An RNA of 177 nucleotides, treated with DMS and 2A3 and read out base by base. For DMS, 752 sequencing reads were counted. Reactivities are given for positions 27 through 126. Conditions: 150 mM KOAc, 10 mM MgCl2 and 150 mM bicine (pH 8.5), 24 C.
RNA sequence: GGGAACGACUCGAGUAGAGUCGAAAAACCUCUAAGUUCGCUUAGAGGUAAUGAACGCUGCAAAAAGCAGCGCGCUCAGGGGAGCACGCAAAAGCAACGCAAGAACACCAUUCUUCGGAAUGGUGAAGCAGCUAAUCCAAUUCGUUGGAUUAGCUGCAAAAGAAACAACAACAACAAC
Reactivity to DMS in 0.01 (KOAc 150mM, MgCl2 10mM, bicine 150mM(pH8.5), 24C), signal-to-noise 1, nucleotides 027 to 126: a060c000c000u000c000u000a010a010g040u000u010c300g050c000u000u020a000g000a020g010g000u000a000a050u010g000a100a090c030g020c020u000g000c000a050a040a120a060a130g000c030a020g020c010g010c030g000c030u000c000a230g050g020g000g000a120g020c040a030c060g000c010a020a070a160a080g000c050a040a010c020g000c090a140a060g000a120a160c000a010c000c010a000u000u000c000u020u000c080g000g000a010a000u000g000g040u000g020a020a040
Reactivity to 2A3 in 0.01 (KOAc 150mM, MgCl2 10mM, bicine 150mM(pH8.5), 24C), signal-to-noise 1, nucleotides 027 to 126: a030c010c000u000c000u000a020a000g000u060u170c160g040c100u000u000a020g000a010g000g010u030a000a010u050g060a050a030c080g000c040u030g000c010a220a010a040a040a120g020c010a010g010c020g020c030g010c010u030c050a060g160g080g050g000a010g050c060a000c050g030c050a070a130a030a060g030c020a090a000c040g020c040a030a060g020a180a000c000a000c000c000a000u000u000c010u000u070c160g130g000a000a000u010g000g000u000g010a020a010